[RMDB]
Chemical mapping of a 207-nucleotide RNA with 2A3 and DMS.
The DMS profile rests on 2,393 reads.
RNA sequence: GGGAACGACUCGAGUAGAGUCGAAAAUGUCACUUAAAGUCAGUACAAUGUGUUCGCACAUUGUAGUCACUUAAAGUGAGUACAAUGUGUUCGCACAUUGUACUCACUGUCAGUAAGUGACCUGACUUACUCACAGUGAGUAAGUGACCUGACGGAACGAAUCCACGUAUUUCGAUACGUGGAUUCGAAAAGAAACAACAACAACAAC
Reactivity to 2A3 in 0.01 (KOAc 150mM, MgCl2 10mM, bicine 150mM(pH8.5), 24C), signal-to-noise 2, nucleotides 027 to 156: u110g000u000c010a010c030u060u130a180a070a000g020u050c010a000g030u040a010c010a000a000u000g000u000g050u030u080c120g020c160a000c010a010u000u000g000u010a000g000u000c010a000c000u020u080a090a000a020g000u010g000a000g020u000a000c000a000a000u000g000u020g020u040u040c030g050c000a000c000a000u020u020g000u020a000c010u010c000a000c000u000g000u000c050a060g060u020a030a000g000u010g040a030c000c000u030g050a000c000u000u040a010c000u000c000a120c030a210g200u160g200a000g000u030a020a000g000u000g000a010c000c040u090g050a010c000g070g020a140a050
Reactivity to DMS in 0.01 (KOAc 150mM, MgCl2 10mM, bicine 150mM(pH8.5), 24C), signal-to-noise 1, nucleotides 027 to 156: u000g030u000c000a030c040u000u000a020a130a210g020u000c070a010g000u000a000c000a040a030u010g030u040g020u000u010c300g060c020a010c010a030u000u000g030u000a000g000u010c000a020c000u000u000a040a080a050g010u010g040a030g040u000a000c010a000a030u000g050u010g030u000u010c270g010c010a010c000a010u000u000g040u000a020c000u000c000a000c010u020g030u000c220a130g010u010a000a010g010u010g000a040c080c070u000g010a070c000u000u000a010c010u000c030a140c140a210g010u000g000a100g010u000a020a000g060u000g000a130c050c020u010g020a080c050g000g000a110a270
The RNA was probed in 150 mM KOAc, 10 mM MgCl2 and 150 mM bicine (pH 8.5) at 24 C.